This 177-nucleotide RNA was probed chemically with DMS and 2A3. Values cover nucleotides 27 to 126.
RNA sequence: GGGAACGACUCGAGUAGAGUCGAAAAGCAGGCCCGUUGGACCCGCCGCGUGGGACCGCGCAGCGGGCGAGGCGCGCCGCGGCAGCCCCGAGGAGAGCGGGCGGGGGCACCGGUACCGGCCGGGGACUUGUAACAGAGUUUUCGAACUCUGUUACAAAAAAGAAACAACAACAACAAC
Reactivity to DMS in 0.01 (KOAc 150mM, MgCl2 10mM, bicine 150mM(pH8.5), 24C), signal-to-noise 5, nucleotides 027 to 126: g010c030a140g000g010c250c050c010g010u000u010g000g010a270c000c000c000g020c000c030g030c020g020u010g010g000g020a120c180c040g020c010g000c060a080g010c000g030g000g020c020g010a300g000g000c000g020c300g010c050c010g020c060g000g000c090a150g020c030c000c010c040g020a080g020g000a100g000a110g010c050g000g000g000c060g000g000g000g000g000c090a060c040c010g010g010u010a060c050c050g000g000c010c000g010g000g010g010a090c160
Reactivity to 2A3 in 0.01 (KOAc 150mM, MgCl2 10mM, bicine 150mM(pH8.5), 24C), signal-to-noise 2, nucleotides 027 to 126: g010c040a040g020g010c010c040c030g000u000u040g060g050a070c000c000c000g000c010c010g000c030g020u070g010g150g160a140c160c050g000c010g000c000a010g000c000g030g020g020c000g010a020g030g030c010g000c010g000c020c000g030c020g040g000c020a050g050c010c000c000c000g010a070g050g020a050g010a020g030c030g000g030g010c020g010g000g000g020g010c010a030c010c000g000g030u060a100c000c040g050g000c000c020g020g000g020g020a060c040
Source information
For 2A3 the reverse transcriptase was SuperScript II with manganese.